[RMDB]
Record summary
Structure probing data (2A3 and DMS) for a 177-nucleotide construct. 2A3 adducts were read by reverse transcription with SuperScript II with manganese. The 2A3 profile rests on 5,078 reads. Reactivities are given for positions 27 through 126. For DMS the reverse transcriptase was MarathonRT. It was measured as part of the RMDB library M2PK50.
RNA sequence: GGGAACGACUCGAGUAGAGUCGAAAAACCAUCCUAUUCGUAGGAUGGUGCACCAUUGCCGAUUGUAUAAAAUACCGCAGGCGGAAAAGCGGUUCAAAUAAGGAACUUGUCAGUUCGCUGACAAGAAUCUGUGAGAAUUAUUCGUAAUUCUCACAGAAAAAGAAACAACAACAACAAC
Reactivity to 2A3 in 0.01 (KOAc 150mM, MgCl2 10mM, bicine 150mM(pH8.5), 24C), signal-to-noise 3, nucleotides 027 to 126: a000c000c000a010u000c000c000u020a030u040u080c190g050u050a000g000g010a000u010g000g000u010g010c000a040c030c000a070u040u250g050c010c010g110a130u040u130g090u070a130u070a210a160a080a070u110a030c000c000g000c040a040g120g000c000g000g040a070a120a030a010g010c020g030g000u050u100c060a090a070a080u190a160a090g090g000a040a110c000u000u000g000u000c010a010g010u020u090c210g010c060u000g000a000c010a010a000g020a020a080
Reactivity to DMS in 0.01 (KOAc 150mM, MgCl2 10mM, bicine 150mM(pH8.5), 24C), signal-to-noise 6, nucleotides 027 to 126: a030c000c000a010u000c000c000u000a020u000u010c160g030u000a000g000g010a010u000g000g000u000g010c150a190c020c010a120u010u010g020c010c020g010a130u000u010g010u000a080u010a070a060a130a160u010a030c010c010g040c000a110g020g010c060g010g000a060a060a070a110g000c010g010g010u000u010c100a040a050a110u000a090a120g010g000a130a160c000u000u000g010u000c000a010g010u000u000c190g020c010u010g000a010c010a010a000g000a070a070